An RNA of 170 nucleotides, treated with DMS and 2A3 and read out base by base. 2A3 adducts were read by reverse transcription with SuperScript II with manganese. For 2A3, 1,767 sequencing reads were counted. The RNA was probed in 150 mM KOAc, 10 mM MgCl2 and 150 mM bicine (pH 8.5) at 24 C. High 2A3 reactivity points to a flexible backbone, as in loops and unpaired stretches.
RNA sequence: GGGAACGACUCGAGUAGAGUCGAAAAGGAGAAAAGGAGCGGGCCCUCCGAUCCGAGGGGCCCGACGCCCCUGAUCUGGAGAGCACUCCGGCCCGAAGGGUUGAGUAGCACCCAGAGGGAGGAAAUCAUAGGCUCCGCUUCGGCGGAGCCAAAAGAAACAACAACAACAAC
Reactivity to DMS in 0.01 (KOAc 150mM, MgCl2 10mM, bicine 150mM(pH8.5), 24C), signal-to-noise 3, nucleotides 027 to 129: g020g000a080g000a060a050a100a030g000g020a060g020c040g040g000g000c000c040c000u030c030c040g030a080u060c080c300g000a090g060g000g000g040c020c060c130g000a030c000g030c060c080c010c010u020g010a060u000c000u000g040g000a010g000a160g000c100a020c080u000c080c130g000g010c080c000c000g000a270a220g010g020g110u000u070g030a060g060u080a090g020c180a110c030c010c000a020g030a300g010g000g000a090g000g000a030a020a070u020c030a040u010a090
Reactivity to 2A3 in 0.01 (KOAc 150mM, MgCl2 10mM, bicine 150mM(pH8.5), 24C), signal-to-noise 1, nucleotides 027 to 129: g100g030a030g050a020a150a000a000g130g000a000g080c070g000g020g090c000c040c000u030c030c090g000a050u070c070c160g020a000g000g000g000g000c000c000c000g000a020c000g000c000c010c000c000u020g020a000u020c000u100g000g000a040g000a040g070c000a030c000u050c000c000g000g110c000c000c040g060a030a110g000g000g000u040u040g070a090g030u150a000g020c070a000c000c000c000a000g050a020g030g000g000a030g000g000a040a110a010u130c060a040u040a050

DMS adducts were read by reverse transcription with MarathonRT.